[RMDB]
Chemical mapping of a 207-nucleotide RNA with 2A3. For 2A3, 666 sequencing reads were counted.
RNA sequence: GGGAACGACUCGAGUAGAGUCGAAAAAAAAUCUAGUGCAUAUAUUGUCUUAAUUACUUAGGCUAAAAGAAAUAAGUAUUAAAGCGGGACAAGGCAUCGACAUUUGAUACAAAUAUUGAUCAAUGGAACAAGAAACACUACUUCGGUAGUGUUUCAAGCUUGUCUAUACGUUCGCGUAUAGACAAGCAAAAGAAACAACAACAACAAC
Reactivity to 2A3 in 0.01 (KOAc 150mM, MgCl2 10mM, bicine 150mM(pH8.5), 24C), signal-to-noise 1, nucleotides 027 to 156: a000a000a000a000u040c010u050a010g010u050g090c000a040u030a040u080a150u300u040g000u000c000u040u170a180a170u110u020a100c000u000u040a000g000g000c040u120a150a150a010a000g040a050a080a070u070a010a010g010u000a010u100u080a160a000a000g110c030g010g060g000a010c030a090a000g050g000c000a050u120c110g050a060c000a060u030u040u090g040a040u060a030c060a010a110a000u080a110u080u160g000a020u050c000a000a010u080g040g010a100a030c080a180a090g100a000a000a000c010a000c000u000a000c010u000u040c040g280g000u000a000g010u000g000u010u000u000c000a010a000